[RMDB]
RNA sequence: GGGAACGACUCGAGUAGAGUCGAAAAAGUAUCGGGUUCGCCCGAUACUAGAGCACCACUCCUGCGGGAGUUAACGCCAAACGCACAGGCGGGUGCAAAGCCAACUCAAGGGUUUCGACCCUUGAAAGGUGUUUAGGCAAUUCGUUGCCUAAACACCAAAAGAAACAACAACAACAAC
Reactivity to DMS in 0.01 (KOAc 150mM, MgCl2 10mM, bicine 150mM(pH8.5), 24C), signal-to-noise 1, nucleotides 027 to 126: a010g000u000a030u010c000g020g020g020u000u000c140g010c000c000c000g010a000u000a000c010u000a040g010a300g020c030a010c000c030a080c000u000c000c000u020g000c050g020g060g000a030g000u000u000a010a150c050g010c020c040a030a090a230c240g020c130a060c110a180g000g060c020g000g140g070u000g010c030a030a050a060g020c050c050a110a110c100u000c000a060a000g000g000g010u000u000u000c260g020a020c000c000c000u000u000g000a010a050a100
Chemical mapping of a 177-nucleotide RNA with DMS.
For DMS, 592 sequencing reads were counted.
It was measured as part of the RMDB library M2PK50.